[RMDB]
RNA sequence: GGGAACGACUCGAGUAGAGUCGAAAAGAUAUGGAGAGCACAGCUAGCCAUAUGUCGGAAACGACAUGGUGGCUUGGACCUGUGACUCUCCUAAGUCAAACCUAACUCAUGUUCGCAUGAGUUAGGAGCUACACAACGUCUUCGGACGUUGUGUAGCAAAAGAAACAACAACAACAAC
Reactivity to 2A3 in 0.01 (KOAc 150mM, MgCl2 10mM, bicine 150mM(pH8.5), 24C), signal-to-noise 2, nucleotides 027 to 126: g010a000u050a020u110g010g010a030g010a010g050c010a000c010a000g070c100u110a030g030c000c000a010u020a010u060g000u000c010g000g060a050a040a030c000g030a010c010a000u030g230g020u030g060g030c000u010u080g050g100a130c020c000u010g000u050g060a180c010u000c000u000c000c000u000a010a000g010u000c050a100a030a180c000c000u000a000a020c000u010c000a020u050g050u070u100c300g050c190a000u000g010a000g000u000u000a000g000g000a010
Reactivity to DMS in 0.01 (KOAc 150mM, MgCl2 10mM, bicine 150mM(pH8.5), 24C), signal-to-noise 3, nucleotides 027 to 126: g020a020u000a300u030g020g000a000g010a020g020c000a000c020a010g020c130u010a030g050c010c000a010u000a010u000g000u000c000g020g000a060a080a210c030g030a030c000a000u000g000g020u010g000g040c010u010u020g000g020a110c300c020u000g020u000g000a130c000u000c000u010c000c000u000a010a060g010u000c030a100a180a260c000c000u000a000a000c000u010c000a000u000g000u000u010c300g040c010a020u000g000a010g000u000u000a010g000g010a030